Source information: The record gives the reactivity of an RNA of 177 nucleotides to DMS and 2A3. Source: RMDB library M2PK50, as collected in RNAgym. The 2A3 profile rests on 2,654 reads. Conditions: 150 mM KOAc, 10 mM MgCl2 and 150 mM bicine (pH 8.5), 24 C. Reactivities are given for positions 27 through 126.
[RMDB]
RNA sequence: GGGAACGACUCGAGUAGAGUCGAAAAGACUUGUGGUUCGCCACAAGUCAAAUAAGCUUGUAGAAAUGGCCAAACUACAUGCAUCGAAAGAAAGGCCAUAAAAAAGGACAUGCUUCGGCAUGUCCAACUAAACUUGGAACUUCGGUUCCAAGUUUAGAAAAGAAACAACAACAACAAC
Reactivity to DMS in 0.01 (KOAc 150mM, MgCl2 10mM, bicine 150mM(pH8.5), 24C), signal-to-noise 1, nucleotides 027 to 126: g000a010c000u000u000g120u000g020g000u000u010c290g030c000c000a000c000a000a000g000u000c000a020a090a040u010a080a090g000c030u010u000g000u000a020g000a000a010a010u010g080g000c010c000a240a130a120c000u000a010c010a010u010g000c030a120u000c130g010a150a040a130g010a030a160a120g000g030c000c000a110u010a000a010a040a070a070a050g000g010a010c000a010u000g000c000u000u030c090g030g030c000a020u000g000u010c000c000a040a030
Reactivity to 2A3 in 0.01 (KOAc 150mM, MgCl2 10mM, bicine 150mM(pH8.5), 24C), signal-to-noise 2, nucleotides 027 to 126: g000a000c000u000u000g010u020g050g050u020u080c210g010c090c000a000c000a000a000g000u000c000a010a000a000u000a010a020g010c010u010u010g010u020a000g010a010a080a020u020g010g010c000c010a010a010a040c000u010a000c000a000u040g040c000a140u160c150g180a160a130a070g150a070a120a010g030g000c000c040a010u070a000a040a000a000a010a000g010g000a000c000a010u010g050c020u090u110c210g020g000c000a010u000g000u000c000c000a000a000